Description:
Structure probing data (2A3 and DMS) for a 207-nucleotide construct. It was measured as part of the RMDB library ARCHII. The 2A3 profile rests on 1,227 reads. The reactions ran in a buffer of 150 mM KOAc, 10 mM MgCl2 and 150 mM bicine (pH 8.5), at 24 C. The DMS profile rests on 1,493 reads.
RNA sequence: GGGAACGACUCGAGUAGAGUCGAAAACUUGGUGGGCUAAUUUCUGGCCUGCCCUAUCCAAGCACAGAGUUGGAUCAUGUGGUCCAAUUGAAAGAAUGGGCUACUAGAUUCCUAAAGUGGGGUGGACCGCGUGAGGCUGGUUUCACAGAGCAACGAACCUAAGGUAUGCGUUCGCGCAUACCUUAGGAAAAGAAACAACAACAACAAC
Reactivity to 2A3 in 0.01 (KOAc 150mM, MgCl2 10mM, bicine 150mM(pH8.5), 24C), signal-to-noise 3, nucleotides 027 to 156: c090u040u090g010g010u010g000g010g020c020u030a060a160u160u190u110c120u120g000g000c010c000u000g000c000c000c000u150a120u040c010c000a030a010g070c020a010c030a070g090a040g050u120u100g050g010a010u040c030a070u070g050u050g030g000u000c000c000a040a100u070u220g040a150a160a050g090a020a130u010g020g010g020c010u000a020c000u040a100g020a050u130u160c020c010u150a140a090a000g060u040g000g040g010g000u010g020g020a050c040c010g020c040g030u110g050a060g060g070c040u020g020g040u060u050u040c040a030c020a030g070a020g060c030a070a060c030g090a010a070
Reactivity to DMS in 0.01 (KOAc 150mM, MgCl2 10mM, bicine 150mM(pH8.5), 24C), signal-to-noise 1, nucleotides 027 to 156: c030u000u000g030g050u000g000g080g000c000u010a070a080u000u000u000c130u000g020g010c000c000u010g000c030c020c080u010a040u000c040c050a160a090g070c070a090c080a060g020a130g080u000u020g000g020a000u020c020a210u020g100u000g040g020u020c010c000a030a190u000u020g000a170a150a210g010a080a150u000g000g020g000c010u000a010c050u010a300g000a160u000u010c030c000u030a070a070a130g000u010g020g030g020g000u010g010g000a060c080c070g000c050g000u020g010a150g050g000c030u000g050g000u000u000u010c050a030c060a020g010a140g000c050a060a120c050g000a060a300